[RMDB]
RNA sequence: GGGAACGACUCGAGUAGAGUCGAAAAUAGAUCCAUCCACGCAGAUCUCACGGAGCCGUUUCAAGCAGCUCUCGCUCACCUGGACACUAAGUUCGGGAUUCGCGGAUGUGGAAGCGGUUGCAUGCCGCCUGGCGCAUCCGUUCGCGGAUGCGCCAGGAAAAGAAACAACAACAACAAC
Reactivity to 2A3 in 0.01 (KOAc 150mM, MgCl2 10mM, bicine 150mM(pH8.5), 24C), signal-to-noise 3, nucleotides 027 to 126: u150a020g020a040u010c020c000a020u050c110c060a120c030g070c060a020g020a100u000c010u030c040a030c040g040g050a000g000c000c070g020u000u060u070c090a130a010g000c000a030g060c020u020c000u160c040g000c020u080c020a060c010c000u020g000g000a020c010a050c170u260a260a130g000u030u000c040g030g000g130a190u080u070c050g000c010g010g000a000u030g040u090g040g020a050a000g000c010g020g000u050u130g160c060a020u140g010c000c000g050
Reactivity to DMS in 0.01 (KOAc 150mM, MgCl2 10mM, bicine 150mM(pH8.5), 24C), signal-to-noise 1, nucleotides 027 to 126: u010a030g030a050u020c000c030a110u000c060c020a020c060g000c070a150g000a010u000c000u040c030a090c060g000g000a030g000c040c030g000u000u000u020c210a160a090g020c100a130g000c090u000c030u060c000g000c070u000c180a000c000c000u010g000g000a000c060a270c300u020a110a090g000u000u000c020g000g000g060a160u020u150c130g030c010g000g000a020u000g000u010g000g020a010a150g060c000g000g010u030u000g000c060a100u030g000c010c000g000
This 177-nucleotide RNA was probed chemically with 2A3 and DMS. The DMS profile rests on 991 reads. Conditions: 150 mM KOAc, 10 mM MgCl2 and 150 mM bicine (pH 8.5), 24 C. For DMS the reverse transcriptase was MarathonRT. Values cover nucleotides 27 to 126. Source: RMDB library OK1LIB, as collected in RNAgym. The 2A3 profile rests on 1,129 reads.